The data come from the RNA Mapping Database (RMDB), libraries RFM100 and RFMREP. The record gives the reactivity of an RNA of 177 nucleotides to DMS and 2A3. The reactions ran in a buffer of 150 mM KOAc, 10 mM MgCl2 and 150 mM bicine (pH 8.5), at 24 C. In probing experiments dimethyl sulfate is read out at A N1 and C N3, which are open when not base-paired. For DMS the reverse transcriptase was MarathonRT. 2A3 adducts were read by reverse transcription with SuperScript II with manganese.

[RMDB]
RNA sequence: GGGAACGACUCGAGUAGAGUCGAAAACACCUGGGAUUUAGGUGCCUUUAAUUUGACAAAAGAAGAAUACGUAUCCAUUCAGUACUCCAGAGGGACUUGAAAACUGUUCUUCCCUGAACUAACGCUGCUGCACUAUAACGUUCGCGUUAUAGUGCAGAAAAGAAACAACAACAACAAC
Reactivity to DMS in 0.01 (KOAc 150mM, MgCl2 10mM, bicine 150mM(pH8.5), 24C), signal-to-noise 3, nucleotides 027 to 126: c080a070c020c020u000g000g000g010a140u020u000u030a010g000g010u000g030c030c050u000u010u000a060a100u020u020u000g000a110c060a020a090a100a110g010a070a090g000a080a060u020a030c180g020u010a040u010c070c100a230u000u000c030a060g000u000a080c060u000c010c090a080g010a110g000g000g000a060c090u000u020g000a060a050a050a060c080u000g010u000u000c060u000u000c010c030c040u000g030a060a060c100u010a090a070c190g010c080u030g010
Reactivity to 2A3 in 0.01 (KOAc 150mM, MgCl2 10mM, bicine 150mM(pH8.5), 24C), signal-to-noise 5, nucleotides 027 to 126: c030a010c000c010u020g050g050g050a080u060u050u140a060g010g010u050g030c000c020u130u080u050a160a200u090u090u140g110a040c050a020a090a020a050g070a030a040g020a090a030u110a060c060g040u040a040u030c010c000a000u020u060c010a010g010u040a100c010u010c020c030a050g020a100g070g020g050a030c030u050u090g080a060a040a050a010c020u040g030u030u000c000u020u010c020c010c000u030g080a040a040c030u030a040a010c040g040c080u090g000